[RMDB]
RNA sequence: GGGAACGACUCGAGUAGAGUCGAAAACGGACCUUCGGAGUCACCAAGACCGACCUGAUCGAUUUUUCGCCGGUCGUCCGCAAUCACUUGUUCACUCAGUUGCUUGGUCAAACGUACGAUGGUGACAGUUAGUAUUAUCGUUCGCGAUAAUACUAACAAAAGAAACAACAACAACAAC
Reactivity to DMS in 0.01 (KOAc 150mM, MgCl2 10mM, bicine 150mM(pH8.5), 24C), signal-to-noise 9, nucleotides 027 to 126: c080g010g000a070c040c060u000u000c060g010g010a210g010u000c040a040c030c030a070a100g000a090c050c020g010a050c050c070u000g010a090u000c070g010a090u010u000u000u010u000c090g020c090c080g010g010u000c030g020u000c040c040g010c070a070a090u010c070a070c100u000u010g000u000u000c120a080c080u000c050a070g010u000u000g010c050u000u000g000g000u000c060a050a060a100c100g010u010a100c090g000a080u000g010g010u000g000a040c060a120
Reactivity to 2A3 in 0.01 (KOAc 150mM, MgCl2 10mM, bicine 150mM(pH8.5), 24C), signal-to-noise 8, nucleotides 027 to 126: c020g040g030a020c010c010u070u040c050g100g030a080g030u040c020a000c030c010a040a030g030a030c020c040g020a020c000c030u090g040a150u150c030g010a060u050u110u020u100u210c040g010c040c000g010g020u030c020g010u010c020c020g020c030a020a070u110c020a040c140u080u140g040u200u100c060a070c120u050c040a070g020u110u080g080c030u030u070g030g030u060c040a080a080a050c060g140u260a030c040g080a050u080g000g030u030g030a010c010a010